[RMDB]
RNA sequence: GGGAACGACUCGAGUAGAGUCGAAAAAAAUUAUUGAAAUGACAAGUAAAGUGUGGGAUUAUCAUGAUAGUCAACAACAAAGACUUUUAGAAAGUCGUGAUCGUACUACAAGUGGUCUGGACACUCAUCACAACUCAAAUUUCGAUUUGAGUUGUGAAAAAGAAACAACAACAACAAC
Reactivity to 2A3 in 0.01 (KOAc 150mM, MgCl2 10mM, bicine 150mM(pH8.5), 24C), signal-to-noise 2, nucleotides 027 to 126: a000a000a010u250u190a080u040u060g030a060a070a120u120g020a030c010a050a050g100u150a160a050a100g040u040g000u050g060g040g030a030u010u060a040u170c010a020u040g060a020u020a000g000u000c030a050a020c020a050a000c020a030a240a000g030a020c040u020u050u040u100a200g100a070a100a000g020u020c020g000u000g040a060u060c050g000u020a010c020u000a010c000a030a040g020u030g050g000u000c010u020g050g010a020c020a020c040u000c000a080
Reactivity to DMS in 0.01 (KOAc 150mM, MgCl2 10mM, bicine 150mM(pH8.5), 24C), signal-to-noise 3, nucleotides 027 to 126: a050a070a040u010u020a070u010u000g000a100a090a060u000g000a090c080a080a090g000u000a100a060a070g020u010g000u000g020g010g000a040u000u000a030u000c050a060u000g000a080u000a020g020u000c010a040a030c100a070a070c180a050a060a150g000a010c000u000u000u020u010a140g020a090a070a030g000u000c000g000u000g000a080u000c070g010u010a070c020u000a030c050a030a130g030u010g000g000u010c040u000g010g030a080c040a050c050u000c140a110
The record gives the reactivity of an RNA of 177 nucleotides to 2A3 and DMS. For 2A3 the reverse transcriptase was SuperScript II with manganese. Source: RMDB library OK2TRN, as collected in RNAgym. For DMS, 2,899 sequencing reads were counted.